[RMDB]
RNA sequence: GGGAACGACUCGAGUAGAGUCGAAAAGCGUUGAUAAAGACAAUACAGCUAAAAUCGUUUGUCUCAUUUUACAACCUCGGUGAAGAGUCCCAUUCCCUAAUUAAAUAUGGGAUAGCGAUUAAAGUGAGUGCAAAAUCAGUUUCGACUGAUUUUGCACAAAAGAAACAACAACAACAAC
Reactivity to 2A3 in 0.01 (KOAc 150mM, MgCl2 10mM, bicine 150mM(pH8.5), 24C), signal-to-noise 1, nucleotides 027 to 126: g040c040g000u010u040g050a100u070a210a100a030g100a020c050a110a070u160a150c070a020g000c060u110a010a000a000a300u000c020g050u070u170u070g020u000c020u000c020a000u030u050u100u000a170c060a050a110c030c070u060c050g000g050u060g080a110a080g000a030g020u040c000c020c000a010u000u040c000c010c000u020a060a010u210u100a070a170a020u170a020u080g030g000g000a000u020a000g030c000g000a000u120u040a040a050a080g110u070g110a110
Reactivity to DMS in 0.01 (KOAc 150mM, MgCl2 10mM, bicine 150mM(pH8.5), 24C), signal-to-noise 2, nucleotides 027 to 126: g010c160g020u010u000g000a080u000a120a120a080g010a060c020a000a070u010a100c090a240g020c000u000a050a150a110a060u000c030g000u000u000u020g000u000c000u010c010a030u000u010u000u010a090c120a050a080c110c130u000c140g040g060u020g040a070a100g010a150g000u010c010c000c020a220u020u000c010c010c020u000a040a150u010u020a040a060a030u020a040u000g000g010g000a010u030a070g000c000g000a070u000u000a030a120a050g010u000g010a150
The record gives the reactivity of an RNA of 177 nucleotides to 2A3 and DMS.
The 2A3 profile rests on 634 reads.
The reactions ran in a buffer of 150 mM KOAc, 10 mM MgCl2 and 150 mM bicine (pH 8.5), at 24 C.
For DMS the reverse transcriptase was MarathonRT.